An RNA of 170 nucleotides, treated with DMS and 2A3 and read out base by base. Conditions: 150 mM KOAc, 10 mM MgCl2 and 150 mM bicine (pH 8.5), 24 C.

[RMDB]
RNA sequence: GGGAACGACUCGAGUAGAGUCGAAAAGGUCGGGAUGGGCCGCAGUUCCCGACGAGGAGCCCGCAGGUGGGAGGAUCAGCCACCGGAGGGGACGCGAUGCCAAAGAGUGGGGGAAAUCUCGCGAGGGAAAGGAAUGAGUUCGCUCAUUCCAAAAGAAACAACAACAACAAC
Reactivity to DMS in 0.01 (KOAc 150mM, MgCl2 10mM, bicine 150mM(pH8.5), 24C), signal-to-noise 9, nucleotides 027 to 129: g010g030u010c030g010g020g020a060u040g000g020g020c010c040g040c100a100g010u000u000c010c010c020g040a070c060g000a060g000g000a040g000c100c020c030g010c030a070g010g000u010g030g030g020a030g040g000a080u010c120a110g020c080c060a060c060c040g040g030a160g010g000g010g000a060c080g020c070g020a100u010g030c020c080a050a080a080g000a080g030u010g020g040g040g000g040a050a070a100u040c030u000c060g030c170g000a090g000g000g000a040a060a050
Reactivity to 2A3 in 0.01 (KOAc 150mM, MgCl2 10mM, bicine 150mM(pH8.5), 24C), signal-to-noise 9, nucleotides 027 to 129: g080g010u060c020g000g010g050a050u080g030g050g020c020c020g020c030a020g010u060u040c000c010c000g010a020c020g010a030g040g020a020g030c010c010c020g020c040a020g010g050u060g040g020g010a060g010g010a050u060c030a020g050c020c010a030c020c010g010g010a010g010g010g000g000a000c010g000c020g050a050u140g040c010c020a050a080a010g090a030g040u140g000g000g000g000g000a020a050a060u050c040u020c020g020c030g020a050g020g010g000a040a090a060

Source information: For DMS, 61,017 sequencing reads were counted. In probing experiments dimethyl sulfate is read out at A N1 and C N3, which are open when not base-paired. Source: RMDB library 15KLIB, as collected in RNAgym.